[RMDB]
This 177-nucleotide RNA was probed chemically with 2A3 and DMS. 2A3 adducts were read by reverse transcription with SuperScript II with manganese. It was measured as part of the RMDB library OK1LIB.
RNA sequence: GGGAACGACUCGAGUAGAGUCGAAAAAGAAAACACUGCAUUAGCCCAUAUUAAUCCAAAUUCGUUAGAGAAUAACUUGGUUAAAUUGGGCAUCUUUAAACGUGCUAUCGAGAUUGGCAAUACGCAACAACACCGUUAUGUUCGCAUAACGGUGUUGAAAAGAAACAACAACAACAAC
Reactivity to 2A3 in 0.01 (KOAc 150mM, MgCl2 10mM, bicine 150mM(pH8.5), 24C), signal-to-noise 5, nucleotides 027 to 126: a000g100a010a020a000a000c110a040c060u090g020c040a130u140u140a030g000c000c000c000a030u080a090u060u030a020a020u040c020c010a000a000a070u050u040c010g100u110u210a070g040a020g030a240a050u080a070a040c020u020u020g000g000u000u000a020a020a050u050u010g000g000g000c000a000u010c000u030u160u070a040a100a050c060g040u030g020c020u050a030u140c090g030a060g070a250u050u060g030g000c020a030a070u080a100c100g000c070a060a020
Reactivity to DMS in 0.01 (KOAc 150mM, MgCl2 10mM, bicine 150mM(pH8.5), 24C), signal-to-noise 3, nucleotides 027 to 126: a040g030a040a080a130a200c120a000c050u000g030c070a070u050u010a180g020c000c000c020a040u030a140u000u000a020a020u050c030c030a000a030a080u000u050c070g000u020u140a110g000a190g000a010a040u030a040a120c190u010u000g000g000u000u000a000a030a300u030u000g000g000g030c000a030u010c060u030u010u020a000a060a160c120g000u010g030c030u020a090u070c060g020a030g000a060u020u010g000g020c060a110a070u010a110c150g000c090a070a160
Conditions: 150 mM KOAc, 10 mM MgCl2 and 150 mM bicine (pH 8.5), 24 C. As a SHAPE reagent, 2A3 marks flexible, mostly unpaired nucleotides at the ribose 2'-OH.